[RMDB]
Structure probing data (DMS and 2A3) for a 177-nucleotide construct. The reactions ran in a buffer of 150 mM KOAc, 10 mM MgCl2 and 150 mM bicine (pH 8.5), at 24 C. It was measured as part of the RMDB library OK2TST. The DMS profile rests on 6,228 reads.

RNA sequence: GGGAACGACUCGAGUAGAGUCGAAAAUUCAGCUGGACAUAAAUAAAACCAAAAUCCGGUGGCACGGGAAGGACAACCAGGUGCCAAAGUCUGUGUGCUCCAGCGACUGCCUCGAAGGGCACCAGCGGCCUAUAAGCAAAUUCGUUUGCUUAUAGGCAAAAGAAACAACAACAACAAC
Reactivity to DMS in 0.01 (KOAc 150mM, MgCl2 10mM, bicine 150mM(pH8.5), 24C), signal-to-noise 6, nucleotides 027 to 126: u000u000c070a160g020c020u000g010g000a090c090a060u000a060a110a130u010a050a080a110a180c060c070a050a060a110a170u010c090c050g020g010u000g010g010c010a020c020g000g010g000a060a060g010g010a120c260a110a060c030c040a070g010g020u000g010c010c020a050a080a070g020u000c030u010g000u010g020u000g000c090u010c010c020a080g020c040g000a060c150u000g010c050c060u000c050g010a100a100g000g000g000c020a030c020c020a040g010c120g020
Reactivity to 2A3 in 0.01 (KOAc 150mM, MgCl2 10mM, bicine 150mM(pH8.5), 24C), signal-to-noise 5, nucleotides 027 to 126: u060u020c020a010g000c010u010g000g030a020c050a040u160a070a210a030u160a030a100a140a060c040c030a080a090a040a150u070c040c040g040g020u040g010g000c020a010c030g020g020g050a140a050g100g050a030c000a030a040c030c020a070g040g090u030g010c000c030a030a020a000g050u010c030u030g120u020g000u010g080c040u030c030c010a010g010c010g010a020c050u080g030c010c000u040c040g050a070a060g030g010g000c000a000c010c010a020g070c040g080